[RMDB]
RNA sequence: GGGAACGACUCGAGUAGAGUCGAAAACAGGCACGCAUUGCCGUGGCCGCCCUCAGCGCACGUGCAGGAGCAGCCAUCACUCGACGCCGUCGCCGUGUACGCAGGAAAACACGACGCCGCGAGGGUGGGAUGCCGCUAGUUUCGACUAGCGGCAUCCAAAAGAAACAACAACAACAAC
Reactivity to 2A3 in 0.01 (KOAc 150mM, MgCl2 10mM, bicine 150mM(pH8.5), 24C), signal-to-noise 2, nucleotides 027 to 126: c080a020g040g060c020a000c060g000c030a060u150u210g070c080c020g000u020g070g160c010c060g050c020c000c000u090c000a060g000c060g040c090a020c020g080u140g050c030a000g000g080a050g000c010a030g060c050c000a060u050c020a010c000u060c020g160a300c000g150c220c080g000u010c000g040c060c000g000u000g020u030a030c050g040c100a090g100g140a030a270a030a000c000a000c020g040a010c010g060c050c000g040c060g010a000g000g000g000u000g070